[RMDB]
RNA sequence: GGGAACGACUCGAGUAGAGUCGAAAACUUUAAUUUUGGCAACUCCCUUAUCAAUCUUAAGCGUUUCAAGGCGGUUUCUGAUGAAGCUAGCAUCUAUGGACUUGGCCAUCAAUUUAUAGAGAGGGAGAUGUGCUUCCAAAUUCGUUUGGAAGCACAUAAAAGAAACAACAACAACAAC
Reactivity to DMS in 0.01 (KOAc 150mM, MgCl2 10mM, bicine 150mM(pH8.5), 24C), signal-to-noise 2, nucleotides 027 to 126: c070u000u030u040a020a070u000u000u000u000g000g000c050a190a120c010u010c020c000c000u010u010a150u000c080a010a070u000c030u020u000a010a030g010c060g000u000u000u010c070a070a100g000g000c040g020g000u000u000u020c020u020g010a130u020g000a040a070g000c050u010a040g040c030a120u050c090u010a080u010g000g020a120c070u000u020g030g020c010c020a070u000c090a060a070u050u020u010a050u020a110g010a100g000a020g030g000g010a010g020
Reactivity to 2A3 in 0.01 (KOAc 150mM, MgCl2 10mM, bicine 150mM(pH8.5), 24C), signal-to-noise 4, nucleotides 027 to 126: c000u060u080u240a080a190u010u130u120u190g050g000c000a010a060c010u010c000c030c000u000u040a180u030c100a130a010u000c010u100u140a030a030g080c000g090u010u110u120c120a050a010g030g010c000g050g060u020u030u000c100u080g280a280u270g010a040a000g020c020u170a110g000c010a100u010c040u110a160u150g040g050a000c000u010u110g090g000c030c000a010u030c000a040a110u030u130u140a120u090a020g040a000g000a020g010g000g000a010g020